[RMDB]
RNA sequence: GGGAACGACUCGAGUAGAGUCGAAAACUGCACGACGAUUGUGCAUACAUGUCCGUUGUGCACAUCGAAUAUCUAACUUUAGAUACGAGGAUGUAGAUUCUGUCCAACGAUAUUAGGACUACAUCCAAGACUCUUACUACUUCGGUAGUAAGAGUCUAAAAGAAACAACAACAACAAC
Reactivity to DMS in 0.01 (KOAc 150mM, MgCl2 10mM, bicine 150mM(pH8.5), 24C), signal-to-noise 3, nucleotides 027 to 126: c100u030g000c080a090c100g010a090c060g000a040u020u040g040u010g000c140a000u070a020c070a050u050g000u040c190c060g010u020u000g070u000g000c000a020c130a070u000c040g050a200a100u020a000u000c050u020a030a070c160u010u000u000a010g020a020u000a100c190g000a160g060g030a000u020g020u000a010g050a100u000u010c000u000g030u060c140c130a030a180c300g000a140u000a090u030u040a030g010g060a060c000u000a020c000a000u000c000c000a120
Reactivity to 2A3 in 0.01 (KOAc 150mM, MgCl2 10mM, bicine 150mM(pH8.5), 24C), signal-to-noise 5, nucleotides 027 to 126: c010u030g010c060a010c030g050a000c000g020a020u020u190g040u080g070c060a020u140a080c060a070u120g170u130c140c080g040u100u030g010u020g010c010a000c000a090u050c020g040a070a040u030a010u060c030u040a010a180c070u100u160u080a020g000a020u030a030c080g040a060g010g010a000u000g010u000a020g050a220u010u000c000u030g050u070c060c040a130a060c130g040a040u050a080u280u210a020g000g010a000c000u000a000c000a000u000c000c000a000